The data come from the RNA Mapping Database (RMDB), library TTRDES. Chemical mapping of a 177-nucleotide RNA with 2A3 and DMS. The RNA was probed in 150 mM KOAc, 10 mM MgCl2 and 150 mM bicine (pH 8.5) at 24 C. The DMS profile rests on 1,319 reads. For 2A3, 3,226 sequencing reads were counted. For DMS the reverse transcriptase was MarathonRT. Values are in units of 0.01, from 0 to 300, in steps of 10.
RNA sequence: GGGAACGACUCGAGUAGAGUCGAAAAGAUAUGGAAUGUCACAGGGAGCCUAUGAUCGGAAACGAUCAAGGCAUCGAUCUGUGCAUUCCUAAGUCAAAACGUUUAAGGUCUUCGGACCUUAAACGAACCUGAGGUAAUCGUUCGCGAUUACCUCAGGAAAAGAAACAACAACAACAAC
Reactivity to 2A3 in 0.01 (KOAc 150mM, MgCl2 10mM, bicine 150mM(pH8.5), 24C), signal-to-noise 2, nucleotides 027 to 126: g000a000u020a010u050g000g010a010a000u080g300u300c040a000c000a000g120g100g210a080g000c020c000u300a300u270g000a000u000c000g000g000a010a000a000c010g000a000u000c000a000a000g010g000c020a000u090c050g090a250u030c010u020g000u010g020c000a000u000u000c000c000u000a010a000g010u020c010a070a050a070a100c010g000u020u030u000a000a000g000g000u040c010u020u110c300g080g000a030c000c000u000u000a000a000a000c010g010a000a030
Reactivity to DMS in 0.01 (KOAc 150mM, MgCl2 10mM, bicine 150mM(pH8.5), 24C), signal-to-noise 1, nucleotides 027 to 126: g000a000u000a110u010g010g000a000a000u000g010u020c000a000c000a000g010g030g030a280g030c000c000u000a110u000g010a020u000c000g050g000a050a020a050c000g000a020u000c000a010a010g000g020c000a120u010c300g020a110u000c010u000g010u020g000c020a020u000u000c000c000u000a000a050g000u000c020a080a060a120a260c050g010u000u000u000a020a030g000g000u000c010u000u000c300g000g000a000c000c000u000u000a010a000a010c000g000a050a050